Structure probing data (2A3 and DMS) for a 207-nucleotide construct.
Source: RMDB library RNAMAK, as collected in RNAgym.
The reactions ran in a buffer of 150 mM KOAc, 10 mM MgCl2 and 150 mM bicine (pH 8.5), at 24 C.
The 2A3 profile rests on 2,890 reads.
RNA sequence: GGGAACGACUCGAGUAGAGUCGAAAAGGGGUCAUGUCCAAACCAUUGUCAGUUCCGAUAAGUACCUGAAGCCUCCACGGGUACUUUUGACGGAACUUGGAUUUAUGGGUAGACAUGACGGAGGCACCCAAAACUCAUACAGUUCGCUGUAUGAGAACAUAAUUUCAACGUUCGCGUUGAAAUUAUGAAAAGAAACAACAACAACAAC
Reactivity to 2A3 in 0.01 (KOAc 150mM, MgCl2 10mM, bicine 150mM(pH8.5), 24C), signal-to-noise 4, nucleotides 027 to 156: g140g010g060g010u010c010a010u000g000u000c020c020a300a240a150c070c020a150u160u300g060u090c020a010g000u010u000c020c000g030a120u030a100a010g000u000a000c000c000u020g040a120a020g000c000c000u000c010c010a010c030g000g000g010u000a010c030u020u000u010u070g080a040c030g000g000a000a000c000u050u130g070g010a030u050u210u300a140u170g040g000g010u050a020g000a000c000a000u000g000a010c000g000g000a000g000g000c010a020c000c020c000a030a090a050a070c020u030c000a000u000a000c010a010g060u090u100c160g120c130u000g000u000a000u010g000a000g000a020a010
Reactivity to DMS in 0.01 (KOAc 150mM, MgCl2 10mM, bicine 150mM(pH8.5), 24C), signal-to-noise 1, nucleotides 027 to 156: g000g060g020g020u000c000a020u000g000u020c010c010a120a110a170c010c000a010u010u000g000u010c100a090g000u000u000c000c030g010a180u000a090a050g010u000a010c010c000u000g000a070a100g000c030c020u000c000c010a300c030g020g000g040u000a010c010u000u000u000u000g030a190c070g000g000a020a000c010u000u000g040g010a120u020u010u000a060u000g020g020g000u000a050g030a040c010a030u000g000a000c010g010g020a020g060g060c000a120c020c000c010a070a070a090a240c000u010c010a010u000a000c000a020g020u000u000c250g110c020u000g000u000a010u000g000a010g020a090a200